[RMDB]
RNA sequence: GGGAACGACUCGAGUAGAGUCGAAAAGAUAUGGACCGAGUACGGACGAGAAUGGCGACGAAGUCGGAAACGACAGAGCCAUCUCUGAUGUACCGGUCCUAAGUCAAAAGGGGCGUUCGCGCCCCAACUGUCCAAUGGUCUUCGGACCAUUGGACAGAAAAGAAACAACAACAACAAC
Reactivity to DMS in 0.01 (KOAc 150mM, MgCl2 10mM, bicine 150mM(pH8.5), 24C), signal-to-noise 1, nucleotides 027 to 126: g000a030u020a300u000g010g010a000c000c000g090a160g000u000a000c000g000g000a300c250g000a000g000a030a080u000g030g010c000g000a160c300g000a050a140g060u000c000g050g000a080a080a190c000g000a000c000a050g000a280g000c000c000a000u000c000u000c000u000g000a300u010g000u000a000c000c000g000g020u020c000c000u020a000a170g000u000c000a060a000a160a140g000g000g050g060c060g090u000u000c300g000c030g000c020c080c000c110a060a000